[RMDB]
Conditions: 150 mM KOAc, 10 mM MgCl2 and 150 mM bicine (pH 8.5), 24 C. Chemical mapping of a 177-nucleotide RNA with 2A3 and DMS.
RNA sequence: GGGAACGACUCGAGUAGAGUCGAAAACAUGCCCUGCAGUCGGCUGUGGGCCGGAAGGACACUGACAACAAGGUGGGCAGGGACGGUCACAGCCUCAUACCAAGGGCUGGAGAGACGAUCAUGCAGGCUGUCCUUUUACAUUCGUGUAAAAGGACAGAAAAGAAACAACAACAACAAC
Reactivity to 2A3 in 0.01 (KOAc 150mM, MgCl2 10mM, bicine 150mM(pH8.5), 24C), signal-to-noise 5, nucleotides 027 to 126: c010a020u120g030c000c010c000u010g000c020a020g040u050c030g020g000c010u030g010u130g090g090g030c000c000g030g020a050a020g050g010a010c010a000c030u060g070a040c050a160a010c020a170a090g040g010u030g040g110g040c040a060g030g030g060a010c010g010g010u020c010a010c000a000g000c000c000u020c020a110u140a100c020c040a040a080g050g000g000c010u010g020g040a140g010a010g000a020c040g000a040u070c060a090u110g020c010a010g050g020
Reactivity to DMS in 0.01 (KOAc 150mM, MgCl2 10mM, bicine 150mM(pH8.5), 24C), signal-to-noise 7, nucleotides 027 to 126: c090a120u010g010c110c010c010u000g010c060a080g020u010c070g010g010c010u000g020u000g030g030g010c000c000g000g020a190a130g010g010a110c020a020c010u010g000a120c120a110a120c300a140a190g010g010u000g000g010g020c030a090g010g020g010a240c030g010g000u000c010a140c020a020g000c000c000u000c090a050u000a130c150c170a160a140g000g000g010c010u010g010g000a110g000a060g000a050c030g000a030u010c070a130u000g000c030a050g000g010
About this RNA
For 2A3, 11,848 sequencing reads were counted. Values cover nucleotides 27 to 126. For DMS, 8,908 sequencing reads were counted.